[RMDB]
RNA sequence: GGGAACGACUCGAGUAGAGUCGAAAAAGAACACGGCAUCUUUAUUGGUUCAGUGUCCCUGGAGUUAGGUAUGGGAGAGAAUUAAGGUAAAUACGAUUUUAGCUUAAUGGUGUAGUAGUUUCUAGCUUUUGGGAGACUGUGUUCUCAGAUGUUGUCAGCAGUGAUAUCCAUUCGUGGAUAUCACUGCAAAAGAAACAACAACAACAAC
Reactivity to 2A3 in 0.01 (KOAc 150mM, MgCl2 10mM, bicine 150mM(pH8.5), 24C), signal-to-noise 2, nucleotides 027 to 156: a020g040a030a020c090a010c100g050g000c070a090u030c040u080u300u150a210u270u250g060g000u120u110c060a020g020u030g080u030c030c000c000u010g010g020a030g020u000u010a010g020g090u090a060u060g130g040g000a100g010a010g010a120a040u030u010a030a000g000g030u000a000a050a050u130a090c140g040a100u010u070u030u000a020g030c000u010u010a000a000u030g080g070u250g040u090a090g030u010a020g010u050u070u070c000u000a010g000c000u030u040u030u020g010g000g000a010g010a000c030u000g000u000g030u130u000c100u020c020a050g040a110u050g010u040u050g040u080c030a010